RNA sequence: GGGAACGACUCGAGUAGAGUCGAAAAAGCGUAGGCGAUGGACAACAGGUUGAAAUUCCUGUACCACCUCCUCACCGUUUGAGUAAUGGGGGGACGCAGCAAGGUAGGGUAAGCGCACUGAUGGAUACACGUGCGCUAGAUUCGUCUAGCGCACGUGAAAAGAAACAACAACAACAAC
Reactivity to DMS in 0.01 (KOAc 150mM, MgCl2 10mM, bicine 150mM(pH8.5), 24C), signal-to-noise 3, nucleotides 027 to 126: a050g030c040g020u010a040g020g000c100g000a090u010g000g000a070c150a140a050c020a020g000g000u010u000g010a080a130a150u000u020c000c000u000g000u010a070c020c030a060c050c020u000c000c000u010c030a150c050c040g010u000u000u020g000a150g000u010a090a050u000g020g030g000g020g000g000a060c080g020c080a020g000c100a080a040g000g000u000a040g010g010g020u000a030a080g000c060g020c040a050c070u000g010a140u010g000g020a120u010a160
Reactivity to 2A3 in 0.01 (KOAc 150mM, MgCl2 10mM, bicine 150mM(pH8.5), 24C), signal-to-noise 2, nucleotides 027 to 126: a000g060c050g050u060a020g030g030c040g020a030u070g000g060a030c030a140a000c000a140g060g030u080u070g130a160a080a060u100u020c010c000u000g020u010a000c030c000a070c000c000u030c030c010u050c020a250c030c060g050u040u150u170g220a200g030u140a100a090u190g000g000g000g000g000g000a020c090g000c030a030g010c030a040a050g040g000u060a040g190g050g000u060a040a040g000c030g000c010a020c040u100g050a130u070g080g000a040u110a170
Conditions: 150 mM KOAc, 10 mM MgCl2 and 150 mM bicine (pH 8.5), 24 C. Structure probing data (DMS and 2A3) for a 177-nucleotide construct. The DMS profile rests on 2,519 reads. For 2A3 the reverse transcriptase was SuperScript II with manganese. Values cover nucleotides 27 to 126.